An RNA of 177 nucleotides, treated with DMS and read out base by base.

RNA sequence: GGGAACGACUCGAGUAGAGUCGAAAAAAAAAGAUAUGGACCUUGAACUACAGAGUGUUGCUCGAAGAACUAACUUCGGAAACGAAGUUAGGGAGAGCAACGCUCUGCAAGGUCCUAAGUCAAAAAACUAGAUAUAUUGCUUCGGCAAUAUAUCUAGAAAAGAAACAACAACAACAAC
Reactivity to DMS in 0.01 (KOAc 150mM, MgCl2 10mM, bicine 150mM(pH8.5), 24C), signal-to-noise 1, nucleotides 027 to 126: a080a120a090a170a150g000a000u010a040u020g010g000a000c000c000u000u000g000a070a000c010u040a300c000a010g000a010g010u000g000u000u000g000c010u000c000g000a140a110g000a050a190c020u000a000a020c010u010u010c030g000g000a000a000a030c000g030a000a010g010u000u000a010g020g000g000a000g000a030g000c020a000a000c010g020c000u000c000u000g000c010a010a000g020g000u000c000c000u000a000a060g000u010c000a010a070a110a090a140a130